[RMDB]
The record gives the reactivity of an RNA of 207 nucleotides to 2A3. Source: RMDB library OK3TST, as collected in RNAgym.

RNA sequence: GGGAACGACUCGAGUAGAGUCGAAAAUCUGUUCGUACUCACAACUUGUUAGUAAGUAGUUAUUUAGGAAUGAAUUAAAAAUCUUUUUCAUUCAAUCUCUGAGUAUGAUAUUUCCAAAUGGCUAUUAACUUAUUAGGACAUAAAUACUUAUUAAGUACGCUAAAUACCGAUUCGUCGGUAUUUAGCGAAAAGAAACAACAACAACAAC
Reactivity to 2A3 in 0.01 (KOAc 150mM, MgCl2 10mM, bicine 150mM(pH8.5), 24C), signal-to-noise 1, nucleotides 027 to 156: u010c010u040g090u060u000c030g010u020a030c040u020c010a050c030a120a250c130u050u200g010u060u090a050g000u000a140a000g000u020a000g000u010u070a110u090u140u110a040g020g090a070a000u090g050a060a070u050u070a050a150a210a110a080u150c080u070u140u000u000u010c000a000u000u020c010a000a160u120c110u060c080u180g010a000g050u050a040u080g070a010u000a070u050u080u000c020c000a000a000a050u020g030g000c030u030a050u160u040a180a000c000u070u070a010u040u030a100g020g030a010c020a050u130a040a100a070u130a090c070u110u010a000u150u030a080a020g000u020a050